This 177-nucleotide RNA was probed chemically with DMS and 2A3. DMS adducts were read by reverse transcription with MarathonRT. The reactions ran in a buffer of 150 mM KOAc, 10 mM MgCl2 and 150 mM bicine (pH 8.5), at 24 C.

RNA sequence: GGGAACGACUCGAGUAGAGUCGAAAAGUACCCUUGUUCGCAAGGGUACAAAGACAGACUUCAGUGUCAUAAAGAAGGUAACAUCUCAGUUACAAUAAGAGAAAAGCACCUACUUCGGUAGGUGCAAGACUAUAAGAACGUUCGCGUUCUUAUAGUCAAAAGAAACAACAACAACAAC
Reactivity to DMS in 0.01 (KOAc 150mM, MgCl2 10mM, bicine 150mM(pH8.5), 24C), signal-to-noise 6, nucleotides 027 to 126: g010u000a010c000c000c000u000u000g000u000u020c200g030c000a010a000g010g010g020u010a000c000a020a060a080g000a110c120a130g010a110c040u000u010c200a090g010u000g010u000c050a100u000a080a100a150g010a080a070g000g000u000a020a010c020a080u010c070u000c090a090g010u000u000a030c040a090a100u000a070a070g010a120g000a100a070a120a100g000c010a000c000c000u000a000c000u000u010c160g030g010u000a000g000g000u000g010c000a010a010
Reactivity to 2A3 in 0.01 (KOAc 150mM, MgCl2 10mM, bicine 150mM(pH8.5), 24C), signal-to-noise 8, nucleotides 027 to 126: g000u000a000c000c000c000u000u010g040u030u040c150g010c120a000a010g000g000g000u000a000c000a000a000a000g010a010c040a010g040a040c000u070u050c140a230g210u050g030u120c010a030u210a090a170a030g120a040a020g130g000u020a010a010c010a090u050c060u030c150a040g010u030u040a020c030a050a080u220a160a050g100a010g050a040a070a040a040g000c000a000c000c000u010a000c000u030u060c200g070g000u000a000g000g000u000g000c000a000a000